This 207-nucleotide RNA was probed chemically with 2A3 and DMS.
For 2A3 the reverse transcriptase was SuperScript II with manganese.
For 2A3, 2,539 sequencing reads were counted.
For DMS, 2,327 sequencing reads were counted.
The RNA was probed in 150 mM KOAc, 10 mM MgCl2 and 150 mM bicine (pH 8.5) at 24 C.

RNA sequence: GGGAACGACUCGAGUAGAGUCGAAAACUGGCCAUUGUCUUCUCCUAGGCAAGAAAAACAAGAUGGAAGACUCUUUCUCCUCCUCGUCAACAUCAGAAAGCGAGUCUUCCACCUUAAGCACCGAGAACUCCCAGCGCGUAGAAUCCGAUGUGGGCUAGCUUCAUAGACAUUUCGAUGUCUAUGAAGCAAAAGAAACAACAACAACAAC
Reactivity to 2A3 in 0.01 (KOAc 150mM, MgCl2 10mM, bicine 150mM(pH8.5), 24C), signal-to-noise 3, nucleotides 027 to 156: c040u010g020g020c030c030a080u050u090g030u010c040u120u010c030u020c020c030u080a030g040g000c040a050a070g070a100a150a020a020a010c060a020a010g010a010u010g000g000a010a000g000a000c010u010c000u080u060u010c030u020c030c020u110c020c030u100c060g210u130c110a090a120c020a150u110c000a010g020a030a040a010g080c120g040a020g000u000c000u000u000c000c000a010c000c000u010u010a070a000g020c020a020c040c040g060a020g010a110a050c020u010c000c010c010a030g000c030g000c010g020u040a020g050a110a050u050c050c030g050a040u120g050u090g060g020g010c000u030a040
Reactivity to DMS in 0.01 (KOAc 150mM, MgCl2 10mM, bicine 150mM(pH8.5), 24C), signal-to-noise 1, nucleotides 027 to 156: c050u000g030g040c070c040a170u010u010g010u040c030u010u010c050u000c070c030u000a120g000g050c010a040a100g000a070a120a050a130a100c090a090a010g000a040u000g000g000a100a030g000a040c010u000c050u010u000u000c040u000c040c060u010c080c040u000c100g000u020c080a090a120c090a110u000c100a000g000a020a040a040g000c050g010a010g000u000c010u000u000c000c000a000c030c020u000u000a030a110g000c070a090c050c020g000a140g000a070a080c010u000c000c030c010a080g020c030g040c040g000u020a130g000a090a130u000c030c040g010a090u000g010u010g000g000g040c040u000a150